[RMDB]
RNA sequence: GGGAACGACUCGAGUAGAGUCGAAAACUGGAAGCCGGCGAUCGGACGUCCGAACUGGGUGCGCUGUCUCGCGUAGUCGAGCGCGCACUGCCAGGCCGACCUGGCCGCGCCCAUCGCUCCCCAGACGCGCGAGAAUGGGAUUCGUCCCAUUCUCGCGAAAAGAAACAACAACAACAAC
Reactivity to 2A3 in 0.01 (KOAc 150mM, MgCl2 10mM, bicine 150mM(pH8.5), 24C), signal-to-noise 2, nucleotides 027 to 126: c050u030g010g060a020a060g050c070c040g000g000c020g030a050u020c050g020g040a040c000g050u140c050c010g030a180a070c150u150g060g030g000u030g000c000g020c030u100g060u180c000u010c010g010c060g130u240a100g120u300c000g000a000g000c010g000c000g000c010a010c000u010g010c010c000a020g000g000c090c050g080a150c000c020u000g000g000c000c000g010c000g000c000c000c000a020u010c000g000c010u080c000c000c000c000a010g030a110c030g020